[RMDB]
RNA sequence: GGGAACGACUCGAGUAGAGUCGAAAAUUGGUUACACCAAGGAGGGUAGUGUGAUCAAUUUCUGUUACAUGCAUCAAAUGGAACUUGCUAAUGGUACACAUACCGGUUCAGCAUUUGAUGGUACUAUGAUCUUCAAACAGUUCGCUGUUUGAAGAUCAAAAGAAACAACAACAACAAC
Reactivity to 2A3 in 0.01 (KOAc 150mM, MgCl2 10mM, bicine 150mM(pH8.5), 24C), signal-to-noise 4, nucleotides 027 to 126: u000u000g000g000u000u000a000c010a010c010c030a060a070g120g020a060g000g070g020u080a030g010u020g010u000g000a000u000c000a010a010u030u000u000c040u020g100u060u100a070c050a090u140g100c000a000u000c010a020a000a000u010g010g010a020a010c000u040u070g020c020u120a130a060u090g000g070u140a070c160a000c010a130u040a040c010c000g010g000u010u010c030a130g040c000a050u010u010u000g000a000u010g000g050u020a020c010u030a070u060
Reactivity to DMS in 0.01 (KOAc 150mM, MgCl2 10mM, bicine 150mM(pH8.5), 24C), signal-to-noise 2, nucleotides 027 to 126: u010u000g020g020u000u000a020c010a020c010c050a100a150g000g020a090g000g000g040u040a070g000u000g010u000g010a010u000c000a010a000u000u000u000c070u000g020u000u010a080c200a090u000g010c030a000u000c000a010a010a020u000g020g000a040a010c020u010u000g020c160u000a070a040u000g000g000u000a070c160a120c100a100u000a090c130c120g000g020u000u000c010a110g010c010a000u000u000u000g010a020u000g000g020u020a050c210u010a050u000
Structure probing data (2A3 and DMS) for a 177-nucleotide construct. The RNA was probed in 150 mM KOAc, 10 mM MgCl2 and 150 mM bicine (pH 8.5) at 24 C. It was measured as part of the RMDB library 15KREP. For 2A3 the reverse transcriptase was SuperScript II with manganese. For DMS, 1,534 sequencing reads were counted.